[RMDB]
RNA sequence: GGGAACGACUCGAGUAGAGUCGAAAAUUGACGACCAGAGCUUCGGCGUCUUUCCAGACGCUCACGACGAUCUUUUCCUUCAAAUUCGACCCAAGUCCGCACUGCUUGCAGUGCAAAUACAAUUGCCCAUAGCGAUAAGGUUCGCCUUAUCGCUAUGAAAAGAAACAACAACAACAAC
Reactivity to 2A3 in 0.01 (KOAc 150mM, MgCl2 10mM, bicine 150mM(pH8.5), 24C), signal-to-noise 3, nucleotides 027 to 126: u050u030g020a030c030g050a070c000c040a050g020a010g020c050u100u110c060g040g010c000g000u010c000u060u060u020c030c010a000g000a010c020g010c010u040c050a060c050g060a000c030g030a070u000c020u030u040u040u040c030c000u020u080c050a080a080a200u070u060c030g040a070c000c000c020a030a010g060u040c060c060g000c000a000c010u000g010c020u090u200g000c010a020g000u020g040c000a010a000a000u130a010c040a030a140u170u100g050c010c010
Reactivity to DMS in 0.01 (KOAc 150mM, MgCl2 10mM, bicine 150mM(pH8.5), 24C), signal-to-noise 4, nucleotides 027 to 126: u010u010g000a080c280g000a120c040c030a070g010a100g000c030u000u010c080g020g010c010g010u000c000u010u000u010c220c200a140g010a050c030g010c010u000c120a110c070g000a080c070g010a050u000c000u000u000u000u000c040c010u000u000c090a030a060a160u000u000c050g000a070c030c000c020a100a090g010u000c110c150g010c010a030c010u000g020c020u010u000g020c010a010g010u000g010c010a040a050a080u020a060c180a070a100u000u010g000c110c090
The record gives the reactivity of an RNA of 177 nucleotides to 2A3 and DMS. The data come from the RNA Mapping Database (RMDB), library RFMREP. For DMS the reverse transcriptase was MarathonRT.